[RMDB]
RNA sequence: GGGAACGACUCGAGUAGAGUCGAAAAAGCCGCUACGGCGGCAAGUGGCGUUCUCUCUCUCCCUGUCCUGGACUGGGGUCAGACCGUGCCCCGAGGAGAAGCAGCAGAGAAUGAGACUACGUCGUAAGCCUAAGAGUAUGUUCGCAUACUCUUAGGCAAAAGAAACAACAACAACAAC
Reactivity to 2A3 in 0.01 (KOAc 150mM, MgCl2 10mM, bicine 150mM(pH8.5), 24C), signal-to-noise 9, nucleotides 027 to 126: a000g010c010c000g010c010u030a040c240g100g010c020g000g000c010a020a020g160u110g040g000c010g000u010u000c000u000c000u000c000u000c010u020c010c030c000u070g090u270c030c010u090g090g130a200c090u170g020g010g010g010u050c020a060g070a300c060c120g060u150g020c010c000c000c000g020a030g010g030a100g010a070a050g010c020a000g010c010a000g010a000g010a040a090u160g000a000g000a010c080u030a010c020g000u010c000g050u060a090a040
Reactivity to DMS in 0.01 (KOAc 150mM, MgCl2 10mM, bicine 150mM(pH8.5), 24C), signal-to-noise 6, nucleotides 027 to 126: a130g000c010c000g030c070u000a080c100g020g010c000g000g010c050a020a010g020u020g020g000c010g020u000u000c070u000c000u000c010u000c010u000c050c160c020u020g010u010c030c030u000g010g020a150c120u030g000g000g010g020u000c080a100g010a120c200c150g000u030g010c000c000c000c000g000a060g010g000a140g010a080a080g000c080a050g020c300a070g010a010g000a020a050u010g000a060g000a040c090u020a030c010g000u000c000g000u020a070a120

The record gives the reactivity of an RNA of 177 nucleotides to 2A3 and DMS. As a SHAPE reagent, 2A3 marks flexible, mostly unpaired nucleotides at the ribose 2'-OH. The RNA was probed in 150 mM KOAc, 10 mM MgCl2 and 150 mM bicine (pH 8.5) at 24 C.